[RMDB]
RNA sequence: GGGAACGACUCGAGUAGAGUCGAAAAUGUGCUAAGUCUAUUAAGACAAAUUUACAACAUAACGUCCCAGGCAUCGACUCCCAUUGAUGCCUAGUCCGGCUAUAGCUUACUUGUGCUUGCUAUAGUUAGCUCUCUAGAAGAGUGUAAGGGCAACACGGAUGAUCUAAAUCUUCGGAUUUAGAUCAUCAAAAGAAACAACAACAACAAC
Reactivity to DMS in 0.01 (KOAc 150mM, MgCl2 10mM, bicine 150mM(pH8.5), 24C), signal-to-noise 4, nucleotides 027 to 156: u000g010u010g010c020u000a100a220g020u000c020u000a210u010u000a140a080g040a030c020a050a090a240u010u000u000a160c030a100a020c010a040u000a070a110c080g000u000c020c010c050a080g030g010c000a020u000c000g000a100c060u000c070c080c040a300u010u000g020a020u020g000c000c010u000a040g010u000c010c010g010g020c000u000a010u000a010g010c010u000u000a010c030u000u000g020u010g030c020u000u000g000c030u000a030u000a010g010u000u000a070g000c010u000c000u000c040u000a120g010a100a050g000a030g030u000g010u020a060a090g030g010g020c000a070a110c070a070c100g010
Reactivity to 2A3 in 0.01 (KOAc 150mM, MgCl2 10mM, bicine 150mM(pH8.5), 24C), signal-to-noise 9, nucleotides 027 to 156: u080g010u030g030c040u100a110a090g010u000c010u020a200u140u230a280a040g020a010c040a030a120a040u190u240u140a100c070a130a010c020a070u110a110a050c060g040u020c010c010c010a000g000g000c000a000u000c000g040a050c050u060c090c010c010a010u000u070g000a000u000g000c000c000u000a010g000u000c000c000g000g000c000u000a000u000a010g010c010u060u080a060c030u170u230g080u160g230c060u090u040g000c000u010a000u000a000g000u010u020a010g000c000u010c010u000c030u090a140g030a230a010g000a300g000u030g040u070a040a100g000g000g000c020a040a010c100a020c080g060
Structure probing data (DMS and 2A3) for a 207-nucleotide construct. The 2A3 profile rests on 14,782 reads. It was measured as part of the RMDB library RSTRND. Conditions: 150 mM KOAc, 10 mM MgCl2 and 150 mM bicine (pH 8.5), 24 C.